[RMDB]
RNA sequence: GGGAACGACUCGAGUAGAGUCGAAAAUUCAGCGCAUUCGUGCGCUGAAAAGCUGUACAACGCAUGUACAGAAAACAAAACAAAAACAAAACAAAAAGCGUUGCAGGGUUCUUUUCGAAGAACCCAAGAAUCUAAGUCAAUUCGUUGACUUAGAUUCAAAAGAAACAACAACAACAAC
Reactivity to DMS in 0.01 (KOAc 150mM, MgCl2 10mM, bicine 150mM(pH8.5), 24C), signal-to-noise 3, nucleotides 027 to 126: u020u030c000a000g000c000g040c010a070u000u020c220g020u000g000c000g020c000u010g000a000a010a070a090g010c010u000g000u020a010c020a030a060c180g010c090a120u000g010u000a010c000a050g000a050a070a080a140c170a070a040a060a080c140a040a040a080a080a080c080a080a060a090a090c100a060a060a110a140a280g000c130g020u010u010g000c230a120g010g000g010u000u020c000u000u000u030u010c170g000a020a000g000a010a010c010c000c000a020a040
Reactivity to 2A3 in 0.01 (KOAc 150mM, MgCl2 10mM, bicine 150mM(pH8.5), 24C), signal-to-noise 4, nucleotides 027 to 126: u010u000c000a010g000c000g020c020a010u010u060c140g120u050g010c000g010c000u010g000a000a000a000a000g000c000u010g000u020a000c000a060a030c080g040c140a150u050g000u010a000c000a000g020a040a080a010a010c040a010a090a010a010c050a020a120a040a010a010c040a000a110a030a030c040a040a220a070a050a010g060c060g080u130u200g090c130a100g030g000g020u000u010c000u020u040u080u100c130g050a010a010g000a000a000c000c000c000a000a010